[RMDB]
An RNA of 177 nucleotides, treated with DMS and 2A3 and read out base by base. The DMS profile rests on 1,910 reads. DMS (dimethyl sulfate) methylates the pairing face of unpaired adenines and cytosines. The RNA was probed in 150 mM KOAc, 10 mM MgCl2 and 150 mM bicine (pH 8.5) at 24 C. For 2A3, 1,459 sequencing reads were counted.

RNA sequence: GGGAACGACUCGAGUAGAGUCGAAAAUUGCCCCGGAUCAACUUUAAUAGUUAUGACGGUUUCCGACUCGGGAAAAUAGAUUCUUGCAUAACGACGGAAAUUUCAGAGUUUGUUCUGAAUGUCUCCAUCAUAUUUCCUACUUCGGUAGGAAAUAUGAAAAAGAAACAACAACAACAAC
Reactivity to DMS in 0.01 (KOAc 150mM, MgCl2 10mM, bicine 150mM(pH8.5), 24C), signal-to-noise 3, nucleotides 027 to 126: u000u020g000c160c030c020c100g010g020a070u000c060a050a050c010u000u010u030a130a080u010a110g000u000u000a110u000g020a120c110g020g010u000u000u000c030c040g010a110c130u000c070g000g000g000a040a050a050a080u000a120g000a130u000u000c040u000u000g000c080a030u000a090a040c150g000a110c150g000g000a020a080a040u000u000u000c020a030g010a060g010u020u010u010g010u000u000c010u000g000a030a070u000g000u000c100u000c020c030a200
Reactivity to 2A3 in 0.01 (KOAc 150mM, MgCl2 10mM, bicine 150mM(pH8.5), 24C), signal-to-noise 2, nucleotides 027 to 126: u060u070g090c000c000c000c000g000g030a090u060c030a030a060c010u090u200u300a200a100u170a210g040u050u110a050u130g080a040c000g040g010u000u060u000c060c000g090a150c070u040c080g060g000g020a020a020a010a040u180a060g150a080u140u060c050u050u120g030c020a060u050a160a000c010g040a000c050g100g080a030a040a100u060u060u030c030a030g000a030g000u030u250u300g080u130u040c010u020g060a080a040u030g020u030c040u000c040c000a010